Chemical mapping of a 177-nucleotide RNA with 2A3 and DMS. The DMS profile rests on 3,855 reads. The RNA was probed in 150 mM KOAc, 10 mM MgCl2 and 150 mM bicine (pH 8.5) at 24 C.

[RMDB]
RNA sequence: GGGAACGACUCGAGUAGAGUCGAAAAAACAAAAGCAAUUGUUAUGCUUGUGCACAUGGCAGGCCAGAGGCCCAGAUUGUCCCCUUUCCACUAAGGUGGUCCUCCAGUCGACCAGAUGUGGGCUGCCCGUUGAGUGAUCAUUCGUGAUCACUCAACGAAAAGAAACAACAACAACAAC
Reactivity to 2A3 in 0.01 (KOAc 150mM, MgCl2 10mM, bicine 150mM(pH8.5), 24C), signal-to-noise 2, nucleotides 027 to 126: a000a000c110a030a090a010a010g020c030a080a170u120u100g070u180u150a060u130g000c030u060u060g040u060g100c070a060c010a070u100g030g000c030a010g040g020c020c010a040g040a040g080g070c010c000c000a050g050a150u100u120g080u130c000c000c010c020u000u070u000c030c010a060c070u090a090a050g030g000u010g010g000u040c000c010u030c000c020a050g050u060c010g040a080c040c040a050g000a060u090g030u020g020g010g040c010u020g020c040c020
Reactivity to DMS in 0.01 (KOAc 150mM, MgCl2 10mM, bicine 150mM(pH8.5), 24C), signal-to-noise 4, nucleotides 027 to 126: a050a070c080a080a050a030a010g010c060a050a090u000u000g010u010u000a110u010g010c000u000u010g020u000g010c060a060c080a060u010g010g020c150a050g010g000c020c040a100g010a140g020g000c040c040c040a060g000a090u000u010g010u000c020c010c000c070u010u000u020c030c040a090c160u010a090a090g020g010u010g020g000u000c010c010u000c070c120a120g000u010c030g000a120c080c100a060g000a090u010g000u000g010g020g010c030u010g000c060c010